[RMDB]
Conditions: 150 mM KOAc, 10 mM MgCl2 and 150 mM bicine (pH 8.5), 24 C. This 177-nucleotide RNA was probed chemically with DMS and 2A3. For DMS, 1,704 sequencing reads were counted. Values cover nucleotides 27 to 126. For 2A3, 1,213 sequencing reads were counted. For DMS the reverse transcriptase was MarathonRT. It was measured as part of the RMDB library RFM100.
RNA sequence: GGGAACGACUCGAGUAGAGUCGAAAAAAUAAAAACAACACGUAACGACUCCAGCACAACAAAAACAAAAUCGCGGAGGCGCAGCUAACUGAUUCUUUUGGAGAGGAGUUGCUGUCGGGACCCGUCCAUUUAACGCGUCUUUCGAGACGCGUUAAAUAAAAGAAACAACAACAACAAC
Reactivity to DMS in 0.01 (KOAc 150mM, MgCl2 10mM, bicine 150mM(pH8.5), 24C), signal-to-noise 2, nucleotides 027 to 126: a050a080u120a020a060a050a140a030c130a100a020c190a060c150g000u000a120a110c060g010a040c060u040c090c000a040g000c130a040c040a130a100c120a060a010a060a070a070c140a060a040a110a040u000c110g030c030g000g000a050g060g000c080g020c020a020g020c050u060a040a030c080u000g010a040u050u000c060u010u000u090u070g020g000a050g010a170g000g000a020g000u000u020g000c000u010g010u010c020g020g000g020a040c060c010c000g010u000c070c050
Reactivity to 2A3 in 0.01 (KOAc 150mM, MgCl2 10mM, bicine 150mM(pH8.5), 24C), signal-to-noise 3, nucleotides 027 to 126: a000a000u260a000a060a020a000a000c000a000a050c000a020c050g080u110a120a000c030g050a020c010u010c020c000a050g030c020a010c030a030a230c040a050a040a070a000a010c040a020a110a020a070u170c060g000c000g080g000a010g040g010c030g000c030a000g020c000u120a030a040c000u020g010a200u060u000c000u000u170u170u240g100g010a120g020a030g000g050a010g010u040u000g020c020u060g020u050c040g010g030g030a000c020c000c010g040u130c060c000